[RMDB]
RNA sequence: GGGAACGACUCGAGUAGAGUCGAAAACGCUCAACUCGUGGAGCGCAGCACUGAUAACAGUGCAAAAGACAUGAGAAGCUGAGGUUCGCCUCAGCAAAAGAAAAGGAUCAGCGAAAAGCUGAUCCAAGAUGACCUAUCGAUUCGUCGAUAGGUCAUCAAAAGAAACAACAACAACAAC
Reactivity to DMS in 0.01 (KOAc 150mM, MgCl2 10mM, bicine 150mM(pH8.5), 24C), signal-to-noise 3, nucleotides 027 to 126: c000g020c000u010c020a150a040c000u000c000g040u000g030g020a000g010c000g030c160a180g030c000a000c000u000g010a260u090a230a070c010a000g000u000g030c000a060a050a040a030g000a170c080a010u020g000a020g000a200a180g000c000u010g010a000g000g000u010u040c180g020c020c000u010c020a010g040c020a000a050a120a060g030a060a040a070a130g000g000a020u000c000a000g000c000g000a100a080a150a140g000c000u010g000a000u010c000c000a020a000
Reactivity to 2A3 in 0.01 (KOAc 150mM, MgCl2 10mM, bicine 150mM(pH8.5), 24C), signal-to-noise 6, nucleotides 027 to 126: c010g000c000u000c010a040a080c000u010c020g010u010g000g000a000g000c010g000c020a010g000c000a000c000u010g030a150u230a300a110c020a010g000u000g000c010a010a000a010a000g030a020c000a000u020g010a000g010a060a010g000c000u010g000a000g010g030u080u090c180g100c030c010u000c010a000g000c000a010a000a000a000g030a000a070a010a010g000g000a010u000c000a000g010c020g090a140a170a070a040g000c000u000g000a000u000c000c000a000a000